Structure probing data (DMS) for a 177-nucleotide construct. High DMS reactivity at an A or C suggests that its Watson-Crick edge is free. The reactions ran in a buffer of 150 mM KOAc, 10 mM MgCl2 and 150 mM bicine (pH 8.5), at 24 C. Values cover nucleotides 27 to 126.
RNA sequence: GGGAACGACUCGAGUAGAGUCGAAAAAGCGAGCGCGUGAUUCGGCACGAUCGAGCCCGAGCCGCUCGGCUUGAACAGCUCGGGCCCCUCUUCGCCGACCAGGUACAGGCCGCCCGCGUCGACGGGAUGGCCUCUCCACUUUCGAGUGGAGAGGCCAAAAAGAAACAACAACAACAAC
Reactivity to DMS in 0.01 (KOAc 150mM, MgCl2 10mM, bicine 150mM(pH8.5), 24C), signal-to-noise 2, nucleotides 027 to 126: a120g010c050g020a090g000c080g000c060g040u010g010a140u020u010c040g000g010c010a090c250g010a070u010c080g010a090g000c010c000c010g010a020g040c000c030g020c030u000c010g010g000c180u010u020g000a050a050c020a080g000c020u000c010g000g010g000c020c000c000c000u000c040u010u010c140g020c020c000g020a060c150c090a030g010g030u000a060c140a090g000g010c030c050g000c000c000c010g000c040g000u010c120g000a110c020g010g000g000a170